Annotation:
Structure probing data (2A3 and DMS) for a 177-nucleotide construct. 2A3 adducts were read by reverse transcription with SuperScript II with manganese. It was measured as part of the RMDB library M2PK90. The RNA was probed in 150 mM KOAc, 10 mM MgCl2 and 150 mM bicine (pH 8.5) at 24 C. DMS adducts were read by reverse transcription with MarathonRT.
RNA sequence: GGGAACGACUCGAGUAGAGUCGAAAAAAAAACGGCAGCAAGCCGAGCAACGCGAGCAACGCGAGCAAGUACAGCAAGUACUGCAACAUGAGCAACAUGAGCAAGUAGAGCAACUACAGCAAAAAAAACUUAAUAUUCCGUUCGCGGAAUAUUAAGUAAAAGAAACAACAACAACAAC
Reactivity to 2A3 in 0.01 (KOAc 150mM, MgCl2 10mM, bicine 150mM(pH8.5), 24C), signal-to-noise 1, nucleotides 027 to 126: a020a020a020a020a000c040g060g020c040a050g090c090a110a090g040c030c020g000a020g000c030a170a040c050g030c000g020a020g060c020a000a130c010g000c030g020a010g000c020a100a030g060u010a030c030a110g060c030a180a030g020u020a030c000u040g000c000a050a110c000a080u070g010a060g020c020a010a010c020a040u050g020a000g040c020a040a000g050u020a040g020a030g040c020a030a010c010u030a080c000a030g060c090a160a010a080a000a000a000a000
Reactivity to DMS in 0.01 (KOAc 150mM, MgCl2 10mM, bicine 150mM(pH8.5), 24C), signal-to-noise 1, nucleotides 027 to 126: a070a040a070a120a140c070g030g020c010a090g010c130a010a130g040c000c030g000a140g000c060a100a040c050g020c010g000a130g010c050a110a040c060g010c030g010a110g000c040a020a040g010u000a040c130a070g000c100a080a050g000u010a000c080u010g000c000a080a030c090a060u000g030a060g010c030a070a050c070a000u010g010a160g070c040a030a070g020u000a010g000a130g000c080a040a010c030u000a060c030a050g000c010a000a010a030a110a050a030a120